RNA sequence: GGGAACGACUCGAGUAGAGUCGAAAACUCAACAGGAUGCCAUUCCUCUUGUGGUAGCUGGGAGGGGACUUGAGUGCCACUCCAAAGGUUCUAACUGGUGCCACUGGGUGGCCACCAGUGCUAGCGAACCAUGGCAUAAGUUCGCUUAUGCCAUGGUAAAAGAAACAACAACAACAAC
Reactivity to 2A3 in 0.01 (KOAc 150mM, MgCl2 10mM, bicine 150mM(pH8.5), 24C), signal-to-noise 3, nucleotides 027 to 126: c010u020c020a040a010c000a050g070g050a130u100g050c020c010a050u110u070c030c030u080c080u080u140g010u040g020g020u020a040g000c040u040g010g000g000a020g010g000g000g000a010c020u130u190g090a040g110u260g060c010c000a030c020u020c010c000a040a060a010g060g020u100u020c030u050a050a050c000u000g010g000u020g000c020c000a030c090u190g300g120g070u010g010g000c010c010a000c000c000a000g010u010g020c050u060a030g060c010g050a030
Reactivity to DMS in 0.01 (KOAc 150mM, MgCl2 10mM, bicine 150mM(pH8.5), 24C), signal-to-noise 6, nucleotides 027 to 126: c020u000c010a080a150c110a050g000g010a120u000g010c050c060a080u000u010c070c050u010c110u000u000g030u000g010g010u010a050g010c040u000g010g010g010a030g020g010g000g000a030c020u020u010g000a130g010u000g000c000c010a030c010u000c010c020a070a100a100g010g000u010u010c050u000a110a050c010u000g000g010u000g000c010c000a020c010u010g020g020g010u010g000g000c140c050a000c000c000a000g010u000g010c150u010a060g010c140g010a110

Source: RMDB library OK2TRN, as collected in RNAgym. An RNA of 177 nucleotides, treated with 2A3 and DMS and read out base by base. DMS (dimethyl sulfate) methylates the pairing face of unpaired adenines and cytosines. The RNA was probed in 150 mM KOAc, 10 mM MgCl2 and 150 mM bicine (pH 8.5) at 24 C. DMS adducts were read by reverse transcription with MarathonRT.